[RMDB]
RNA sequence: GGGAACGACUCGAGUAGAGUCGAAAACUGCUUAACUUCGGUUAAGCAGAAAGUGAACAAAGCCGAAAGACACCGGCAAGUGACCGGCAGCACAAGCCGAAAAAACGGAUGACUUCGGUCAUCCGAACAGUAGCAAGUUGUUCGCAACUUGCUACUGAAAAGAAACAACAACAACAAC
Reactivity to DMS in 0.01 (KOAc 150mM, MgCl2 10mM, bicine 150mM(pH8.5), 24C), signal-to-noise 2, nucleotides 027 to 126: c010u000g020c000u000u000a000a000c000u000u030c150g010g000u000u000a000a020g010c010a020g000a020a020a180g020u000g050a170a060c060a100a080a090g030c010c050g040a130a090a140g040a140c090a070c170c000g020g020c010a060a220g000u020g000a110c160c050g000g000c070a080g030c060a030c060a070a210g000c040c000g000a000a060a080a090a020a090c010g000g000a010u010g010a020c000u010u020c190g020g020u000c000a000u000c000c010g000a010a070
Reactivity to 2A3 in 0.01 (KOAc 150mM, MgCl2 10mM, bicine 150mM(pH8.5), 24C), signal-to-noise 2, nucleotides 027 to 126: c000u000g010c000u010u000a030a010c000u040u040c170g070g010u000u010a000a000g000c000a010g000a000a000a000g060u080g080a090a080c040a100a150a020g040c010c010g090a170a060a040g200a050c060a040c070c000g000g000c030a030a030g000u000g010a050c040c000g030g000c020a010g030c020a020c010a110a020g020c020c010g060a050a060a010a030a000a000c040g000g000a000u020g000a000c000u020u040c180g060g000u000c000a010u010c000c000g000a000a010
Record summary
Conditions: 150 mM KOAc, 10 mM MgCl2 and 150 mM bicine (pH 8.5), 24 C. The record gives the reactivity of an RNA of 177 nucleotides to DMS and 2A3. The DMS profile rests on 1,214 reads.